Conditions: 150 mM KOAc, 10 mM MgCl2 and 150 mM bicine (pH 8.5), 24 C. An RNA of 177 nucleotides, treated with DMS and 2A3 and read out base by base.
RNA sequence: GGGAACGACUCGAGUAGAGUCGAAAAGAUUGGGGGGAGAAAUCCCACCCAAUCGAGACGGAUAUCGAGGACGACUGGGUCCUCGUGGAAAAACCUGUCCUCUUGAGACAGGCUGCACACACCGUGCGGAAUCAAUGAUGUUCGCAUCAUUGAUUCCAAAAGAAACAACAACAACAAC
Reactivity to DMS in 0.01 (KOAc 150mM, MgCl2 10mM, bicine 150mM(pH8.5), 24C), signal-to-noise 4, nucleotides 027 to 126: g000a000u000u000g010g000g020g010g010g000a020g000a100a100a150u000c000c000c000a140c000c000c000a000a000u000c000g000a130g010a070c040g000g000a180u010a040u010c030g030a010g000g000a020c000g020a160c300u010g000g000g010u000c000c000u000c010g010u000g000g020a040a100a080a100a080c010c010u010g000u000c010c020u000c250u000u010g000a180g000a000c000a010g000g010c030u000g010c160a090c070a130c110a120c040c020g010u000g020c100
Reactivity to 2A3 in 0.01 (KOAc 150mM, MgCl2 10mM, bicine 150mM(pH8.5), 24C), signal-to-noise 2, nucleotides 027 to 126: g000a000u000u000g010g000g010g010g000g010a020g020a030a050a020u000c000c000c040a180c010c010c000a040a010u000c000g000a000g030a000c070g000g060a060u070a040u240c010g020a020g000g000a010c030g150a170c230u240g110g210g000u000c000c000u030c010g000u010g010g020a060a090a000a030a060c000c000u000g000u020c030c030u270c150u120u300g070a130g010a140c000a000g010g000c000u070g000c020a010c010a010c010a030c070c040g010u040g060c050